[RMDB]
RNA sequence: GGGAACGACUCGAGUAGAGUCGAAAAUGGCGAUGAUAUGAGCCGCGUUUAAAUACAUUCGAUAGUCAUUGCGAUAACCGUCUGCUGAAUGUGGGUGUUGAGGAAAAAGGAGGAUACUCAAAUGCAACUUCUUCCUUUUGUUCGCAAAAGGAAGAAGAAAAGAAACAACAACAACAAC
Reactivity to DMS in 0.01 (KOAc 150mM, MgCl2 10mM, bicine 150mM(pH8.5), 24C), signal-to-noise 4, nucleotides 027 to 126: u000g020g010c020g040a060u000g030a080u000a070u000g000a140g020c060c030g010c160g010u010u010u010a050a110a120u000a060c090a060u000u010c020g010a090u000a080g030u010c060a040u010u010g010c050g000a070u000a060a100c060c050g010u010c050u000g030c070u000g000a060a070u010g010u000g000g010g030u000g020u000u000g010a090g020g000a040a090a060a100a070g010g000a060g010g000a070u000a080c050u000c080a050a080a100u010g010c140a060a120
Reactivity to 2A3 in 0.01 (KOAc 150mM, MgCl2 10mM, bicine 150mM(pH8.5), 24C), signal-to-noise 2, nucleotides 027 to 126: u110g040g020c030g060a030u070g010a020u090a070u270g070a100g000c000c030g000c010g000u060u100u070a110a180a040u150a040c060a040u020u060c030g050a080u040a070g090u040c010a050u030u070g030c000g020a050u040a090a040c040c020g010u050c040u010g010c000u020g100a080a090u170g030u030g040g000g000u090g040u040u080g020a070g020g080a070a090a000a020a050g080g010a040g010g000a010u020a070c000u030c060a030a070a020u090g010c010a040a100

Conditions: 150 mM KOAc, 10 mM MgCl2 and 150 mM bicine (pH 8.5), 24 C. Chemical mapping of a 177-nucleotide RNA with DMS and 2A3. For DMS, 2,900 sequencing reads were counted. High 2A3 reactivity points to a flexible backbone, as in loops and unpaired stretches.